[RMDB]
The data come from the RNA Mapping Database (RMDB), library OK1LIB. An RNA of 177 nucleotides, treated with DMS and 2A3 and read out base by base.

RNA sequence: GGGAACGACUCGAGUAGAGUCGAAAAUUUCGUAAGAUAGUCUGUAAGCCGCAACGUGUCCUUCCAAAUUCAAAAUGUAUUUGUAUUGGCUCUGUUCUUGAAGAGAUAGACGAUUCGCUUUCGGAUACUCUCUGUAAUCAUUCGUGAUUACAGAGAGAAAAGAAACAACAACAACAAC
Reactivity to DMS in 0.01 (KOAc 150mM, MgCl2 10mM, bicine 150mM(pH8.5), 24C), signal-to-noise 6, nucleotides 027 to 126: u010u010u010c020g020u010a080a070g010a050u020a080g010u010c020u010g010u020a070a130g030c020c030g010c090a060a060c090g000u010g000u010c010c020u000u000c040c020a020a070a080u030u010c080a050a030a080a080u030g010u020a080u020u010u000g010u010a080u010u010g010g000c020u000c010u000g000u020u010c050u010u030g010a080a050g000a080g010a070u020a050g010a060c090g000a090u010u010c090g010c090u000u010u010c010g010g000a160u020a110
Reactivity to 2A3 in 0.01 (KOAc 150mM, MgCl2 10mM, bicine 150mM(pH8.5), 24C), signal-to-noise 9, nucleotides 027 to 126: u070u080u040c010g000u030a050a010g020a150u080a050g050u030c030u040g060u080a070a050g030c030c020g030c090a040a050c070g030u020g030u040c000c000u030u000c030c020a010a050a080u080u110c030a070a080a090a140u190g080u120a170u040u070u040g060u020a080u030u090g030g000c020u000c030u060g050u050u030c030u050u120g080a120a060g030a010g010a070u070a060g060a030c030g050a060u070u050c070g040c090u030u060u030c010g020g010a020u080a160
2A3 adducts were read by reverse transcription with SuperScript II with manganese. Conditions: 150 mM KOAc, 10 mM MgCl2 and 150 mM bicine (pH 8.5), 24 C. For 2A3, 16,794 sequencing reads were counted. Values are in units of 0.01, from 0 to 300, in steps of 10.